Conditions: 150 mM KOAc, 10 mM MgCl2 and 150 mM bicine (pH 8.5), 24 C. The record gives the reactivity of an RNA of 177 nucleotides to DMS and 2A3. For DMS the reverse transcriptase was MarathonRT.
RNA sequence: GGGAACGACUCGAGUAGAGUCGAAAAAGCACCAUGGUACCAGUACGCUGGUACCAUGGUGCACUUGGCACUCGCGAACACCGCGAUCUAACUGUAUAAAUCGCGGCGUUAGCUCGUGGCAAACAAAAAGCAAAUCGUAUUUCGAUACGAUUUGCUUAAAAGAAACAACAACAACAAC
Reactivity to DMS in 0.01 (KOAc 150mM, MgCl2 10mM, bicine 150mM(pH8.5), 24C), signal-to-noise 2, nucleotides 027 to 126: a060g030c000a020c000c000a040u000g070g010u000a010c010c010a020g050u000a090c300g090c000u020g000g040u000a000c010c000a000u000g020g010u020g000c000a000c030u000u000g000g000c020a010c030u010c230g000c010g000a000a060c030a040c000c000g010c010g000a000u000c040u000a160a200c160u050g010u000a240u010a050a080a000u000c010g030c000g000g000c060g010u000u000a100g000c000u000c190g000u000g010g060c010a010a010a060c150a000a090a090
Reactivity to 2A3 in 0.01 (KOAc 150mM, MgCl2 10mM, bicine 150mM(pH8.5), 24C), signal-to-noise 2, nucleotides 027 to 126: a010g000c000a000c000c000a020u000g030g000u000a000c000c000a010g030u040a050c300g020c150u000g000g000u000a000c010c000a000u000g000g010u000g000c000a000c000u020u000g040g020c020a000c010u030c040g000c010g010a010a000c010a030c010c010g020c000g010a020u000c040u080a030a130c080u130g120u300a090u120a230a110a010u000c010g000c000g000g000c010g010u020u000a000g000c000u000c020g000u000g080g020c000a000a030a060c060a020a110a140